This 177-nucleotide RNA was probed chemically with DMS and 2A3.
DMS adducts were read by reverse transcription with MarathonRT.
As a SHAPE reagent, 2A3 marks flexible, mostly unpaired nucleotides at the ribose 2'-OH.
The DMS profile rests on 4,643 reads.
The reactions ran in a buffer of 150 mM KOAc, 10 mM MgCl2 and 150 mM bicine (pH 8.5), at 24 C.

RNA sequence: GGGAACGACUCGAGUAGAGUCGAAAAUGGUGCCGUCCGGAAGGGUGACCGGCGUGAUUUCUCGUUCGAAGAACCCGUUCUUGAUCGCCUCUUCGGCCCGGUUCUGGCUGCGCACGCCCCAGCGGUCCCACUCUGUUACUUUCGAGUAACAGAGUGGAAAAGAAACAACAACAACAAC
Reactivity to DMS in 0.01 (KOAc 150mM, MgCl2 10mM, bicine 150mM(pH8.5), 24C), signal-to-noise 3, nucleotides 027 to 126: u000g020g030u000g000c020c030g020u010c000c020g000g020a080a080g010g010g000u000g000a050c060c030g010g010c020g020u000g010a090u010u000u010c020u000c040g020u000u000c140g030a120a050g000a070a050c140c050c030g020u000u000c050u000u000g020a070u000c040g000c030c020u000c060u000u000c040g020g000c120c150c020g000g020u000u000c040u000g010g000c050u010g020c080g000c060a070c150g010c020c010c010c090a260g010c040g000g010u010c040
Reactivity to 2A3 in 0.01 (KOAc 150mM, MgCl2 10mM, bicine 150mM(pH8.5), 24C), signal-to-noise 3, nucleotides 027 to 126: u130g010g020u020g020c000c000g030u010c010c010g030g020a020a010g040g000g010u020g010a030c040c030g020g000c010g030u070g060a180u050u160u000c040u010c040g100u280u190c160g050a210a020g020a020a030c010c030c030g050u130u060c040u080u140g070a130u040c010g000c000c010u040c000u090u050c020g000g000c050c070c000g000g020u070u000c050u070g040g000c020u020g000c040g000c010a070c020g080c000c000c000c020a000g010c020g000g020u020c000